An RNA of 207 nucleotides, treated with 2A3 and read out base by base.
RNA sequence: GGGAACGACUCGAGUAGAGUCGAAAAGUGGCGCGUGCCUGUAGUCCCAGCUACUCGGGAGGCUGAGGCUGGAGGAUCGCUUGAGUCCAGGAGUUCUGGGCUGUAGUGCGCUAUGCCGAUCGGGUGUCCGCACUAAGUUCGGCAUCAAUAUGGUGACCUACUCGAGUGUCUUCGGACACUCGAGUAGAAAAGAAACAACAACAACAAC
Reactivity to 2A3 in 0.01 (KOAc 150mM, MgCl2 10mM, bicine 150mM(pH8.5), 24C), signal-to-noise 1, nucleotides 027 to 156: g020u080g020g000c010g000c020g130u100g060c000c000u060g190u080a000g160u150c000c000c000a000g000c050u110a020c000u000c020g050g050g000a040g040g050c000u000g080a110g080g000c030u030g140g130a070g080g040a090u040c050g040c060u040u020g070a020g000u000c010c000a060g160g000a110g040u130u050c000u000g000g000g000c010u000g000u020a030g000u010g020c010g040c020u030a040u040g000c000c000g000a000u050c030g130g050g000u000g040u000c050c130g000c130a000c070u050a300a000g020u020u000c010g010g000c030a080u000c110a020a100u300a050u290g010g070u110g020a030c000